RNA sequence: GGGAACGACUCGAGUAGAGUCGAAAAGAGCUCUAGAUGCGAUUGUAGACUGUUACAGCAUCUGCUAUCAGUCUGAGAUAGCUCAGGAUAGCUGGAGCUAUCUGCAACGGUGCAGACUCCAGUGACACCGUGAACAAUCGUUCAUGUCACAGAGCAGCGUGACGUGAAUGUUCGCAUUCACGUCACGAAAAGAAACAACAACAACAAC
Reactivity to 2A3 in 0.01 (KOAc 150mM, MgCl2 10mM, bicine 150mM(pH8.5), 24C), signal-to-noise 1, nucleotides 027 to 156: g090a000g030c000u000c010u030a020g010a010u000g000c010g030a010u000u030g010u040a000g020a050c030u030g000u140u150a130c070a080g000c030a160u160c210u300g000c000u030a030u040c010a030g030u000c020u010g060a060g000a050u040a100g000c020u010c010a000g060g040a280u130a090g110c000u080g120g000a000g000c000u040a050u000c000u000g000c030a040a000c100g140g000u030g000c000a030g050a270c030u020c090c010a000g000u000g040a030c040a000c020c000g010u000g050a050a000c000a010a000u000c000g140u120u130c100a040u180g080u020c020a090c050a200g000a000g020c030a000g020
An RNA of 207 nucleotides, treated with 2A3 and read out base by base. The reactions ran in a buffer of 150 mM KOAc, 10 mM MgCl2 and 150 mM bicine (pH 8.5), at 24 C.